The data come from the RNA Mapping Database (RMDB), library PDB130. This 207-nucleotide RNA was probed chemically with 2A3. The 2A3 profile rests on 548 reads. The RNA was probed in 150 mM KOAc, 10 mM MgCl2 and 150 mM bicine (pH 8.5) at 24 C. High 2A3 reactivity points to a flexible backbone, as in loops and unpaired stretches.
RNA sequence: GGGAACGACUCGAGUAGAGUCGAAAACCUCUUUAUCGAAUCUUCCGACACGCAUCCGUGGUACACACUGAAGGGUCGUGUGUUGAACGCCCACCUUGAUGAUCGUCUACCUAAUGUAGGCGGUCGCCAGGUAAGGCGCACUCCACAUCGCGUCACCGACGUCCGAUGUCUUCGGACAUCGGACGUCAAAAGAAACAACAACAACAAC
Reactivity to 2A3 in 0.01 (KOAc 150mM, MgCl2 10mM, bicine 150mM(pH8.5), 24C), signal-to-noise 1, nucleotides 027 to 156: c020c000u020c030u010u200u050a300u000c090g050a060a060u040c040u050u080c070c040g040a090c030a000c050g070c030a080u190c140c090g060u000g030g100u230a030c100a010c000a010c020u120g090a250a160g090g010g020u030c000g020u000g000u030g000u000u040g000a150a030c020g000c000c020c010a010c010c000u070u010g020a190u040g000a000u140c010g000u000c000u000a010c040c050u300a260a130u300g000u010a020g000g010c000g000g000u010c000g030c000c000a000g000g000u020a000a050g020g020c030g000c020a040c010u030c010c000a010c010a000u110c090g000c000g010u000c040a070c120c040